RNA sequence: GGGAACGACUCGAGUAGAGUCGAAAACUGUGAUGGAACUUUGCAGGGGCAAAGAGGGUGAAAUGCCGCUCGACGACAUGGCGAAAUUGUACGCACAGGAGCUGAAGAUUGCGUCUCUGGCUGCGAGCUAGUACUGAUUUUUCGAAAUCAGUACUAGAAAAGAAACAACAACAACAAC
Reactivity to 2A3 in 0.01 (KOAc 150mM, MgCl2 10mM, bicine 150mM(pH8.5), 24C), signal-to-noise 9, nucleotides 027 to 126: c030u030g030u060g070a090u100g020g080a060a060c040u050u050u080g000c050a020g020g020g080g000c020a050a080a030g040a060g030g040g000u070g060a130a080a060u140g010c020c020g080c030u040c030g050a050c030g000a010c030a050u090g040g000c020g020a060a040a020u110u090g050u070a030c030g010c020a030c020a090g040g070a030g000c030u050g030a070a030g050a150u080u170g010c020g070u010c010u010c010u050g080g000c030u030g020c020g010a020g040
Reactivity to DMS in 0.01 (KOAc 150mM, MgCl2 10mM, bicine 150mM(pH8.5), 24C), signal-to-noise 9, nucleotides 027 to 126: c050u000g010u000g010a080u000g010g010a080a100c060u000u000u000g010c040a100g010g010g010g010c050a030a060a080g010a080g010g000g020u000g000a070a080a080u010g010c020c030g000c030u000c060g010a130c080g010a060c070a050u000g000g000c020g010a050a060a080u000u000g010u010a100c120g010c030a060c090a110g000g000a090g010c040u000g000a080a100g000a090u010u000g010c070g000u000c020u000c040u000g010g010c060u000g010c070g010a110g010
The record gives the reactivity of an RNA of 177 nucleotides to 2A3 and DMS. For 2A3 the reverse transcriptase was SuperScript II with manganese. Source: RMDB library OK2TRN, as collected in RNAgym.